Conditions: 150 mM KOAc, 10 mM MgCl2 and 150 mM bicine (pH 8.5), 24 C. An RNA of 177 nucleotides, treated with DMS and 2A3 and read out base by base. Reactivities are given for positions 27 through 126. It was measured as part of the RMDB libraries RFM100 and RFMREP. 2A3 adducts were read by reverse transcription with SuperScript II with manganese.
[RMDB]
RNA sequence: GGGAACGACUCGAGUAGAGUCGAAAAGAAGAGCAUCGGUGAUGUUACAUCCAUCUAAACUCAUCCUUGCACUAUGAGGUCACCGGUGAAGAAAAAAUUGGGGGAAUAUGUAGUCUGAGAUGCUCAAUAUCCUGAUGGUAUUCGUACCAUCAGGAUAAAAAGAAACAACAACAACAAC
Reactivity to DMS in 0.01 (KOAc 150mM, MgCl2 10mM, bicine 150mM(pH8.5), 24C), signal-to-noise 5, nucleotides 027 to 126: g020a110a080g010a030g010c010a010u000c010g010g010u010g010a030u010g000u010u000a050c070a070u020c040c010a050u040c040u010a040a110a140c050u010c020a040u000c020c060u010u000g000c150a020c100u010a090u020g020a070g020g010u010c030a020c080c140g020g010u000g000a060a090g010a000a050a090a060a100a090u040u020g010g000g000g000g010a140a070u030a090u000g020u010a060g000u000c030u000g000a140g000a020u010g000c000u000c020a060a190
Reactivity to 2A3 in 0.01 (KOAc 150mM, MgCl2 10mM, bicine 150mM(pH8.5), 24C), signal-to-noise 7, nucleotides 027 to 126: g120a060a010g020a010g010c010a000u010c010g150g100u080g010a030u030g050u210u070a020c010a020u050c020c000a040u050c020u110a060a070a070c010u010c030a040u050c010c030u060u100g040c040a020c050u080a070u210g080a060g020g080u040c010a010c030c020g000g020u030g010a080a080g080a020a100a020a020a010a020u150u100g010g000g000g030g040a020a030u110a030u160g020u010a020g030u010c010u020g050a030g000a140u010g000c010u000c020a010a020